[RMDB]
RNA sequence: GGGAACGACUCGAGUAGAGUCGAAAAGAUAUGGAAGUGUGUAGGGAGACCGUCGGAAACGAUAGGUCGAAGAACUACCACUUCCUAAGUCAAAAGGUAGAGACACACUUCGGUGUGUCUCUACCAAGUUCUCUGAUACGUUCGCGUAUCAGAGAACAAAAGAAACAACAACAACAAC
Reactivity to DMS in 0.01 (KOAc 150mM, MgCl2 10mM, bicine 150mM(pH8.5), 24C), signal-to-noise 1, nucleotides 027 to 126: g000a040u000a300u000g000g000a030a010g030u000g020u010g040u000a000g010g000g030a190g000a010c000c020g010u000c000g030g010a120a050a120c000g010a010u010a060g030g030u000c010g000a050a080g000a170a110c000u010a000c000c020a010c000u000u000c000c000u000a000a060g000u010c010a110a070a070a080g000g000u010a000g000a030g000a010c000a010c000a030c000u000u020c170g020g000u000g020u000g000u010c000u000c000u000a000c000c010a000a010